RNA sequence: GGGAACGACUCGAGUAGAGUCGAAAACUCGUUGUUUAGCUAUUCAUUCUUGUUUUAUAGAACGUGUGGAUUGGGAUAUAGAGUAUCCUUAUAUCUCACAUGAAAAGAAAUUGAAUUCCUGUUGUAGAGAGCCUCCAGUUCGCUGGAGGCAAAAGAAACAACAACAACAAC
Reactivity to 2A3 in 0.01 (KOAc 150mM, MgCl2 10mM, bicine 150mM(pH8.5), 24C), signal-to-noise 1, nucleotides 027 to 129: c000u000c000g130u000u070g020u000u000u050a050g080c000u000a090u000u010c000a040u090u000c180u000u020g270u000u260u050u000a040u040a000g000a080a000c110g000u000g130u000g010g010a050u000u000g010g020g020a000u060a000u000a070g300a030g290u300a000u000c000c000u170u000a000u000a000u070c070u060c090a000c000a000u200g000a190a210a000a000g070a000a000a070u110u040g000a000a000u000u030c000c170u090g000u000u000g000u020a000g000a000g000a000